RNA sequence: GGGAACGACUCGAGUAGAGUCGAAAAAUGGUAGUUAGUCUACUCGCUAUCCUAGUUACUUUGGAGUAAUCUAAAGUGUGUGUAAACGGUCGAAAGUCUGUAAAAUACUGGGGACAUAGGGUCAACAAGAACUAGUAGACCUUCGGGUCUACUAGAAGUCAUAUCAUCACUUCGGUGAUGAUAUGACAAAAGAAACAACAACAACAAC
Reactivity to 2A3 in 0.01 (KOAc 150mM, MgCl2 10mM, bicine 150mM(pH8.5), 24C), signal-to-noise 3, nucleotides 027 to 156: a010u100g020g000u040a060g010u100u040a060g060u050c020u010a040c010u020c000g020c020u070a060u130c010c010u050a050g040u060u080a020c010u030u000u030g050g000a060g010u090a120a080u030c010u060a020a030a000g030u050g000u000g010u000g030u090a070a080a090c020g030g030u050c020g070a110a010a030g010u000c030u040g050u120a040a060a020a000u080a060c030u060g000g000g020g010a010c010a070u090a020g060g000g030u090c020a020a020c010a040a150g070a060a020c000u000a010g000u000a000g000a000c000c000u000u000c120g120g000g000u000c000u010a000c010u000a000g000a000a000
Reactivity to DMS in 0.01 (KOAc 150mM, MgCl2 10mM, bicine 150mM(pH8.5), 24C), signal-to-noise 2, nucleotides 027 to 156: a100u000g010g000u000a070g000u000u000a110g000u000c020u000a020c030u000c040g060c060u000a080u010c010c030u000a120g010u000u000a020c020u000u010u010g020g000a040g050u000a100a230u010c050u000a030a010a040g010u000g000u030g010u000g010u000a060a080a080c060g000g010u000c040g020a130a090a090g020u000c050u020g050u010a030a050a060a070u010a010c050u000g010g000g010g020a070c080a090u000a060g030g000g010u000c040a060a070c040a040a120g030a140a180c010u000a000g000u000a000g010a050c000c010u000u000c300g020g030g010u000c000u000a000c000u000a020g000a040a080